[RMDB]
RNA sequence: GGGAACGACUCGAGUAGAGUCGAAAACCAUAGGAUUUCGAUCCUAUGGCCUGCUAUGUCGCGUAAUAGCUUUUCGACUCUACUUGGGUCGUUCCCACGCGUUGGGGACCGGUUUCGACCGGUCCAACUAAUUUCGAAGAUUCGUCUUCGAAAUUAGAAAAGAAACAACAACAACAAC
Reactivity to DMS in 0.01 (KOAc 150mM, MgCl2 10mM, bicine 150mM(pH8.5), 24C), signal-to-noise 4, nucleotides 027 to 126: c000c000a020u010a000g010g010a010u000u000u010c180g010a030u000c000c000u000a010u000g010g010c200c140u010g010c010u000a000u000g010u010c180g010c280g020u010a100a010u000a010g010c010u000u010u000u000c000g000a020c000u000c000u000a000c000u000u000g000g000g010u000c000g010u000u000c000c010c010a010c060g010c110g010u000u000g020g010g020g010a040c000c000g010g000u000u000u010c190g010a020c000c000g000g020u000c000c000a000a050
This 177-nucleotide RNA was probed chemically with DMS. For DMS the reverse transcriptase was MarathonRT. It was measured as part of the RMDB library M2PK50. Reactivities are given for positions 27 through 126. The RNA was probed in 150 mM KOAc, 10 mM MgCl2 and 150 mM bicine (pH 8.5) at 24 C. For DMS, 5,650 sequencing reads were counted.